Chemical mapping of a 177-nucleotide RNA with DMS and 2A3. 2A3 adducts were read by reverse transcription with SuperScript II with manganese. It was measured as part of the RMDB library RFM100. For DMS, 2,162 sequencing reads were counted. Reactivities are given for positions 27 through 126. As a SHAPE reagent, 2A3 marks flexible, mostly unpaired nucleotides at the ribose 2'-OH.
RNA sequence: GGGAACGACUCGAGUAGAGUCGAAAAACGCCAGCUACGGCUGGCGAAAAUGAUGGCUUGUUAUCCCUGUCUGAGGCCAAUGGCUUGAUUAGAUGAUUUGACAGAGCACACUAGGUACGCCUAGUGAAAAGCCCUUACCAUUCGUGGUAAGGGCUUUAAAAGAAACAACAACAACAAC
Reactivity to DMS in 0.01 (KOAc 150mM, MgCl2 10mM, bicine 150mM(pH8.5), 24C), signal-to-noise 1, nucleotides 027 to 126: a070c060g000c000c000a010g010c040u000a220c160g000g020c070u000g030g000c000g000a000a000a020a070u000g000a060u000g010g040c030u000u000g010u000u020a050u000c010c010c000u000g080u030c010u000g010a080g000g000c020c030a100a160u020g000g000c000u000u000g000a070u000u010a030g000a060u010g000a150u010u000u000g000a080c110a050g060a080g000c060a210c000a000c000u010a000g000g000u000a060c270g000c000c000u000a010g090u000g010a030
Reactivity to 2A3 in 0.01 (KOAc 150mM, MgCl2 10mM, bicine 150mM(pH8.5), 24C), signal-to-noise 2, nucleotides 027 to 126: a000c000g000c000c000a000g030c020u050a230c300g190g000c070u000g000g000c000g000a040a070a000a000u140g030a010u160g110g000c040u040u080g040u120u050a000u160c030c000c010u010g040u130c070u140g030a020g000g000c000c010a000a080u100g060g030c010u060u000g020a030u020u030a140g060a190u190g090a110u170u050u010g040a050c030a000g110a000g040c000a000c000a000c000u000a000g000g030u050a000c200g100c040c000u000a000g000u050g010a020